[RMDB]
Source: RMDB library OK2TRN, as collected in RNAgym. The record gives the reactivity of an RNA of 177 nucleotides to DMS and 2A3. DMS (dimethyl sulfate) methylates the pairing face of unpaired adenines and cytosines. DMS adducts were read by reverse transcription with MarathonRT. The 2A3 profile rests on 915 reads.

RNA sequence: GGGAACGACUCGAGUAGAGUCGAAAACGAAGCCGUCCAGCCGGGCUUUUCGCUGGCCAUUCCACACGAUGGCGACUAUCGCCUUUUCCAGGUCGACUGCACGCAAAUGUGCCAGCGAAGUGGCCAGCCUAAUGCAGCUCUUCGGAGCUGCAUUAGGAAAAGAAACAACAACAACAAC
Reactivity to DMS in 0.01 (KOAc 150mM, MgCl2 10mM, bicine 150mM(pH8.5), 24C), signal-to-noise 1, nucleotides 027 to 126: c100g000a090a130g030c020c040g010u000c040c030a120g020c100c030g010g000g010c030u000u000u000u000c030g000c020u000g010g000c020c010a040u000u020c100c090a080c210a160c100g010a100u010g000g010c000g000a200c090u000a080u000c040g000c010c010u000u010u010u030c200c110a130g030g030u000c050g020a100c050u000g040c100a060c060g000c060a080a080a030u000g020u000g000c020c020a000g000c010g020a010a040g040u000g020g010c020c010a080g000
Reactivity to 2A3 in 0.01 (KOAc 150mM, MgCl2 10mM, bicine 150mM(pH8.5), 24C), signal-to-noise 1, nucleotides 027 to 126: c010g040a040a020g040c020c010g010u040c050c040a020g030c040c020g070g000g000c020u080u050u020u020c040g000c010u010g020g050c000c000a060u050u080c010c010a120c020a060c120g160a180u130g070g030c040g000a030c020u050a070u160c000g000c030c000u090u080u050u120c110c050a000g000g040u150c050g030a060c060u060g020c140a080c120g010c060a140a000a000u080g110u250g000c020c010a010g000c010g030a000a000g030u060g020g000c000c000a010g010